[RMDB]
RNA sequence: GGGAACGACUCGAGUAGAGUCGAAAACCUCGAGUCUCUUGAGAUUCUUGUUGACCUUCCGGAGCUCCCUCUCGAGUUCCUCCUUUCUUCUUCUUCCAUCGAUCCACUUUCCGAGUGCCUCUUCUCUAAAUCAAGCUCUUCGGAGCUUGAAAAAGAAACAACAACAACAAC
Reactivity to DMS in 0.01 (KOAc 150mM, MgCl2 10mM, bicine 150mM(pH8.5), 24C), signal-to-noise 5, nucleotides 027 to 129: c000c000u010c110g030a000g000u030c020u030c050u000u000g030a100g010a090u060u040c040u000u000g040u040u030g030a120c050c000u000u000c020c030g010g030a070g020c110u030c070c040c030u030c070u030c050g030a100g040u030u020c080c040u030c000c030u020u000u030c000u000u000c030u020u010c030u030u020c000c020a100u030c110g040a130u030c060c050a110c100u000u000u000c000c000g040a000g030u010g030c050c010u040c050u010u050c040u100c010u030a050a050a140
Reactivity to 2A3 in 0.01 (KOAc 150mM, MgCl2 10mM, bicine 150mM(pH8.5), 24C), signal-to-noise 5, nucleotides 027 to 129: c000c020u010c020g020a040g030u010c000u000c010u080u120g040a050g030a090u150u020c020u030u080g120u090u070g060a070c010c000u050u030c030c040g010g000a000g020c010u020c010c010c000u020c000u010c020g030a030g010u040u040c000c010u030c000c000u050u060u050c000u020u000c000u030u000c010u040u000c010c000a070u040c030g050a040u040c030c000a040c000u040u050u010c010c010g020a020g030u040g070c000c000u010c000u050u010c010u010c010u050a040a050a030